[RMDB]
RNA sequence: GGGAACGACUCGAGUAGAGUCGAAAAGGGACUGGCCCGAUGAAGCCCGGCAACCUCACUUUAUUUAAGCGUAAAGUGAAGGUGCUAAUUCCAGCAAAAUGGUGUAUUCCGUUUUGGUAGAUAAGAGAAGCGUGACAUGAGUUCGCUCAUGUCACAAGAUAUAUCACAUCUUCGGAUGUGAUAUAUCAAAAGAAACAACAACAACAAC
Reactivity to 2A3 in 0.01 (KOAc 150mM, MgCl2 10mM, bicine 150mM(pH8.5), 24C), signal-to-noise 9, nucleotides 027 to 156: g020g000g010a020c020u030g040g050c010c000c010g010a040u110g050a030a030g030c020c000c000g000g000c040a130a130c000c000u000c000a000c010u020u000u030a050u060u160u160a170a060g120c060g030u000a000a000a000g000u010g030a080a080g000g000u000g000c000u000a030a030u130u040c010c010a020g010c020a050a000a010a020u040g000g050u100g040u170a100u130u100c010c020g010u010u010u010u020g050g020u090a120g050a210u130a200a100g060a020g060a170a020g090c070g070u000g000a000c000a000u000g000a000g030u040u140c210g050c070u000c000a000u000g000u000c000a000c000a000a000
Reactivity to DMS in 0.01 (KOAc 150mM, MgCl2 10mM, bicine 150mM(pH8.5), 24C), signal-to-noise 4, nucleotides 027 to 156: g010g020g020a130c030u000g020g000c040c010c030g020a130u000g010a150a120g010c010c020c040g010g010c010a020a020c010c000u000c000a010c000u000u010u000a010u000u000u000a160a260g030c300g010u000a000a020a010g030u000g010a020a010g000g000u000g010c000u000a060a160u000u000c010c000a070g020c020a020a030a030a020u010g010g020u000g000u010a080u000u000c010c000g040u000u010u010u000g010g020u000a030g010a070u000a080a130g010a150g000a120a150g020c080g010u010g010a030c000a010u000g000a020g020u000u010c300g020c010u000c010a000u000g000u000c000a000c000a020a040
The record gives the reactivity of an RNA of 207 nucleotides to 2A3 and DMS. Values cover nucleotides 27 to 156. Reactivities are rounded to 0.1 and cut off at 0 and 3.